[RMDB]
RNA sequence: GGGAACGACUCGAGUAGAGUCGAAAACUGCCUUUCUUCUUGUGGAGAUCCACUUUUCGAGGAUUUCUUCCCUUCCUCCCCUCCGGCCCUUCCUCGACUCGGGUUGGCUCAUCCUCGGCGAGGGCGACUUCUGAUGUAAGUUCGCUUACAUCAGAAGAAAAGAAACAACAACAACAAC
Reactivity to 2A3 in 0.01 (KOAc 150mM, MgCl2 10mM, bicine 150mM(pH8.5), 24C), signal-to-noise 3, nucleotides 027 to 126: c010u040g010c020c010u050u140u060c020u090u010c010u090u180g050u090g030g020a060g020a070u030c010c000a050c020u090u110u110u140c090g050a070g040g000a030u040u020u040c000u030u050c020c010c000u030u020c000c000u000c010c000c010c010u000c000c000g040g000c040c000c000u040u020c010c010u000c000g020a030c010u010c040g010g000g000u010u030g040g000c000u000c020a030u040c010c010u030c020g030g020c030g010a020g000g010g010c010g000a030
Reactivity to DMS in 0.01 (KOAc 150mM, MgCl2 10mM, bicine 150mM(pH8.5), 24C), signal-to-noise 3, nucleotides 027 to 126: c060u000g020c020c040u000u000u010c040u000u000c050u020u000g030u000g010g000a090g010a090u010c010c010a090c060u000u010u000u000c110g030a130g020g000a080u000u000u000c030u000u000c010c020c030u010u000c020c000u000c010c020c010c020u010c030c040g010g010c030c050c020u000u010c030c010u010c010g010a070c030u010c040g000g000g000u000u010g000g000c070u000c050a100u000c020c020u000c070g010g010c110g010a070g010g020g020c120g010a170
Source information:
Structure probing data (2A3 and DMS) for a 177-nucleotide construct. The RNA was probed in 150 mM KOAc, 10 mM MgCl2 and 150 mM bicine (pH 8.5) at 24 C. For 2A3 the reverse transcriptase was SuperScript II with manganese. For DMS the reverse transcriptase was MarathonRT. It was measured as part of the RMDB library 15KREP.